RNA sequence: GGGAACGACUCGAGUAGAGUCGAAAAAGAAAUAUACCUGCUAACGUAUAGCCGGGAACGUUACCACAAUUACGGAGCACAUGCGGAUGUCCUGAGCGGGUCCUCGAUUGCAUAGACUGGCGAUGAAUAUUAAAGUUUUUUUCGAAAAGCUUUAAUAAAAAGAAACAACAACAACAAC
Reactivity to 2A3 in 0.01 (KOAc 150mM, MgCl2 10mM, bicine 150mM(pH8.5), 24C), signal-to-noise 2, nucleotides 027 to 126: a000g060a010a090a010u260a030u040a140c000c000u020g000c010u040a090a070c040g100u150a050u130a220g030c000c010g000g000g030a040a040c040g000u050u070a060c040c010a040c060a060a040u160u090a040c100g080g000a020g010c040a040c020a080u090g020c000g040g040a020u020g000u060c000c000u030g010a040g030c030g010g020g070u060c000c000u040c030g090a110u050u150g000c000a030u070a060g080a100c010u010g010g020c000g070a100u060g030a080a030
Reactivity to DMS in 0.01 (KOAc 150mM, MgCl2 10mM, bicine 150mM(pH8.5), 24C), signal-to-noise 4, nucleotides 027 to 126: a110g000a090a090a100u000a100u010a140c020c040u010g010c060u000a060a060c100g010u010a110u000a080g010c030c050g020g000g000a080a060c060g010u010u000a060c070c050a070c170a080a060u010u010a060c080g010g000a060g030c070a050c080a050u010g020c060g010g000a060u000g010u010c050c030u000g000a080g020c050g010g010g010u000c030c030u000c060g000a060u000u010g020c040a080u000a080g010a070c070u000g010g010c020g010a050u000g000a070a160